[RMDB]
The data come from the RNA Mapping Database (RMDB), library TTRDEL. Structure probing data (DMS and 2A3) for a 177-nucleotide construct. Reactivities are rounded to 0.1 and cut off at 0 and 3. For 2A3 the reverse transcriptase was SuperScript II with manganese.
RNA sequence: GGGAACGACUCGAGUAGAGUCGAAAAGAUAUGGAUUAUCCUGGUUGUCAGCUAAGAGAUCGGAAACGAUCUCAUAGCUUGGAUUUACCAGGGUUUGUCCUAAGUCAAACCCUUCUUCGGAAGGGAAGCAUUAAUAGAGCUUCGGCUCUAUUAAUGCAAAAGAAACAACAACAACAAC
Reactivity to DMS in 0.01 (KOAc 150mM, MgCl2 10mM, bicine 150mM(pH8.5), 24C), signal-to-noise 2, nucleotides 027 to 126: g030a040u000a300u010g000g010a020u000u000a020u000c000c010u000g000g000u000u000g020u000c040a020g000c000u000a030a030g020a010g000a000u000c020g010g020a110a090a230c000g010a000u000c000u000c000a040u010a010g000c000u010u010g010g020a030u000u000u000a010c000c000a020g000g000g010u000u000u000g020u000c000c000u000a030a170g010u010c040a110a120a210c010c000c000u000u000c000u010u020c150g010g000a000a010g000g000g000a010a040
Reactivity to 2A3 in 0.01 (KOAc 150mM, MgCl2 10mM, bicine 150mM(pH8.5), 24C), signal-to-noise 2, nucleotides 027 to 126: g010a020u070a030u120g020g000a020u030u010a000u040c000c020u000g010g000u000u000g040u020c040a030g000c000u020a070a060g010a000g000a030u010c010g030g020a070a080a080c010g000a000u000c000u000c020a000u000a000g000c000u020u200g140g000a000u300u170u190a030c000c000a000g000g000g000u000u040u070g000u010c000c000u020a110a010g070u030c080a060a080a300c000c020c010u000u000c040u030u040c250g160g010a000a000g000g010g010a010a010